[RMDB]
Chemical mapping of a 207-nucleotide RNA with 2A3 and DMS.
RNA sequence: GGGAACGACUCGAGUAGAGUCGAAAAACACCAAAACUGAAAACGGGAGGCAAUCCUUCCACGACGAUACUUACUUUCCUUUGAUCGUCGUUACUACUGGCAUAGCCACAAAGGAGAACAAACAUGAGCGCGGACACUGACUUCGGUCAGUGUCCAAUCAAUCUUUUGACUUCGGUCAAAAGAUUGAAAAAGAAACAACAACAACAAC
Reactivity to 2A3 in 0.01 (KOAc 150mM, MgCl2 10mM, bicine 150mM(pH8.5), 24C), signal-to-noise 4, nucleotides 027 to 156: a000c060a100c030c050a080a070a050a050c100u170g090a090a050a050a130c060g010g000g000a010g020g000c150a080a220u260c020c000u010u010c000c010a000c000g000a000c000g000a010u080a170c010u100u030a030c010u070u130u060c000c000u020u010u030g020a020u010c010g000u000c000g010u020u040a050c020u010a020c030u000g010g000c070a260u100a160g030c000c010a030c050a040a030a000g060g000a020g050a040a020c070a130a110a030c060a170u230g070a050g110c120g020c100g060g000a000c000a010c010u010g000a000c000u050u070c180g020g000u000c000a000g000u000g000u010c000c000a010a000
Reactivity to DMS in 0.01 (KOAc 150mM, MgCl2 10mM, bicine 150mM(pH8.5), 24C), signal-to-noise 1, nucleotides 027 to 156: a070c120a170c020c030a090a060a100a190c130u000g030a100a040a040a090c080g010g020g000a010g050g030c100a070a160u000c020c010u000u000c000c020a070c020g010a000c020g020a060u010a060c060u000u000a070c140u000u000u000c050c020u010u010u010g000a010u000c010g000u000c000g000u000u000a070c060u000a090c070u000g000g030c040a090u010a180g000c000c000a080c060a100a050a040g060g020a020g000a090a250c110a140a090a060c040a130u010g000a160g040c060g030c000g000g000a020c010a000c000u000g010a000c000u000u010c290g040g010u030c000a010g080u000g000u010c000c010a010a010
The RNA was probed in 150 mM KOAc, 10 mM MgCl2 and 150 mM bicine (pH 8.5) at 24 C. DMS adducts were read by reverse transcription with MarathonRT. In probing experiments dimethyl sulfate is read out at A N1 and C N3, which are open when not base-paired. The data come from the RNA Mapping Database (RMDB), library M2RFPK.